[RMDB]
RNA sequence: GGGAACGACUCGAGUAGAGUCGAAAACUCUCACCUAAAGCCAAGAAUCAUUGUUUCUUGUAGCGGUGGUUUAAACAGAGUUAUAAACAGCAAGUGAAUCUCGUCGCCUUUGUGGGGCUGUGGCCAUGUGUAAUAUCGCUUUCGAGCGAUAUUACACAAAAGAAACAACAACAACAAC
Reactivity to 2A3 in 0.01 (KOAc 150mM, MgCl2 10mM, bicine 150mM(pH8.5), 24C), signal-to-noise 5, nucleotides 027 to 126: c000u000c010u030c010a020c010c040u070a100a060a040g050c020c010a030a010g000a020a020u110c070a170u070u220g100u090u070u030c000u010u070g050u050a030g110c020g010g010u030g000g070u020u110u160a030a050a020c060a000g060a010g030u100u040a080u110a090a130a030c040a040g050c030a060a070g040u040g140a100a090u020c030u020c060g090u050c020g060c010c000u040u080u100g060u110g020g020g030g000c020u020g030u050g060g010c010c010a030u040
Reactivity to DMS in 0.01 (KOAc 150mM, MgCl2 10mM, bicine 150mM(pH8.5), 24C), signal-to-noise 3, nucleotides 027 to 126: c060u000c010u010c020a050c040c030u000a090a140a180g030c060c000a050a070g050a010a040u000c170a190u030u030g020u010u000u000c030u000u000g000u000a130g000c100g000g000u040g010g040u010u010u050a030a100a080c180a080g000a030g010u000u010a070u010a150a030a060c050a080g000c080a090a030g000u010g030a080a090u000c030u000c000g000u000c100g050c040c030u000u030u000g010u030g000g010g000g000c040u010g030u000g040g000c020c050a100u040